[RMDB]
RNA sequence: GGGAACGACUCGAGUAGAGUCGAAAAUCAAUGAUGUGCAAACUAAGUCCAGCCGAUUACAAACGCGUUCAGUUCAAUCACAACGAAGGCAAAGAAUGCGCUGAGUUAUCUCACCGGCACCGGGGCAAACUCACUGGUCGGUGACAUCGGAGUACGACUGCGUAUAGUUAUUCGUAACUAUACGCAGAAAAGAAACAACAACAACAAC
Reactivity to 2A3 in 0.01 (KOAc 150mM, MgCl2 10mM, bicine 150mM(pH8.5), 24C), signal-to-noise 5, nucleotides 027 to 156: u110c040a020a070u160g030a050u050g040u060g070c030a040a080a100c100u190a110a060g060u030c040c050a020g020c020c030g010a030u080u120a040c040a040a080a010c010g000c010g000u000u020c030a050g030u050u080c060a100a100u100c060a150c050a260a110c120g060a060a030g100g000c020a070a080a030g000a040a000u050g010c030g020c150u030g020a010g050u060u070a060u070c050u000c010a020c000c000g070g000c070a060c060c070g000g000g030g000c050a050a060a200c030u040c040a060c070u080g040g000u020c010g000g000u020g010a010c010a010u050c010g010g030a020g050u110a050c060g060a050
Reactivity to DMS in 0.01 (KOAc 150mM, MgCl2 10mM, bicine 150mM(pH8.5), 24C), signal-to-noise 2, nucleotides 027 to 156: u010c040a090a090u000g010a090u010g030u000g010c060a080a070a160c030u010a130a140g010u020c060c040a060g000c020c020g050a070u010u000a040c100a110a070a020c020g000c020g020u010u010c020a150g010u020u010c050a100a230u010c090a120c050a130a120c060g020a060a070g010g050c030a100a090a110g000a040a030u000g010c010g000c000u010g010a150g010u000u000a080u000c030u000c000a040c040c020g030g100c050a090c060c050g020g030g050g000c080a100a070a140c060u000c010a060c070u030g000g020u000c020g000g010u010g000a030c050a050u000c020g020g010a190g000u000a050c070g010a210

About this RNA: Structure probing data (2A3 and DMS) for a 207-nucleotide construct. The reactions ran in a buffer of 150 mM KOAc, 10 mM MgCl2 and 150 mM bicine (pH 8.5), at 24 C. DMS adducts were read by reverse transcription with MarathonRT.